[RMDB]
RNA sequence: GGGAACGACUCGAGUAGAGUCGAAAAUUAAAGGAGGAGGAGGAGUGUGUGUCUUCCCAGCUGCUGAGUAGAACCACCGCACACACGCGAAAGCUACGAGCAGCAGCAGUGCGGAAACGGUGAAAAAGAGGUAACAGAACUUCGGUUCUGUUACCUCAAAAGAAACAACAACAACAAC
Reactivity to DMS in 0.01 (KOAc 150mM, MgCl2 10mM, bicine 150mM(pH8.5), 24C), signal-to-noise 1, nucleotides 027 to 126: u000u020a000a130a140g000g000a130g010g030a170g000g010a100g010g000a060g010u000g000u000g000u000g010u000c120u010u000c020c020c030a100g030c000u020g000c020u020g000a130g020u000a040g020a040a150c050c010a080c290c000g040c020a080c080a070c180a100c100g000c030g000a070a200a140g020c000u000a030c060g000a300g000c080a030g010c150a010g010c000a030g000u030g010c060g020g000a030a080a030c170g000g020u010g000a030a080a040a110a150